Description: The record gives the reactivity of an RNA of 177 nucleotides to 2A3 and DMS. The 2A3 profile rests on 4,936 reads.
RNA sequence: GGGAACGACUCGAGUAGAGUCGAAAAGCGAACAGCGCCAGACCAGCACCGUAUAAGCGCAAUGCUUUACUACACCUUCAGGUGUAUAUAUUGUGAGGUAUGCUGCUCUUGUCCGCCAUAUACUCUGGCUACCUGUAGGAUUCGUCCUACAGGUAGCAAAAGAAACAACAACAACAAC
Reactivity to 2A3 in 0.01 (KOAc 150mM, MgCl2 10mM, bicine 150mM(pH8.5), 24C), signal-to-noise 4, nucleotides 027 to 126: g020c010g030a050a050c020a050g040c020g040c040c010a010g020a040c020c000a050g070c010a010c020c020g040u080a100u040a220a010g030c010g000c100a060a060u210g000c000u100u050u060a040c030u020a000c010a000c000c000u120u270c160a100g000g000u010g030u020a000u000a000u000a030u110u100g010u020g030a050g030g010u050a050u080g060c050u030g000c000u010c000u010u080g010u010c020c000g000c020c030a060u160a020u040a180c020u050c040u060g080
Reactivity to DMS in 0.01 (KOAc 150mM, MgCl2 10mM, bicine 150mM(pH8.5), 24C), signal-to-noise 3, nucleotides 027 to 126: g010c020g010a050a040c040a060g000c190g010c080c050a070g010a060c050c040a150g030c000a060c030c080g040u010a040u000a040a060g010c020g010c130a090a090u000g010c030u000u000u010a070c180u000a030c030a000c000c000u010u020c300a130g030g010u000g000u000a000u000a060u000a040u010u000g010u000g000a140g000g020u010a020u000g010c080u000g010c050u000c020u010u010g000u010c020c020g010c040c030a080u010a090u000a090c070u000c030u000g010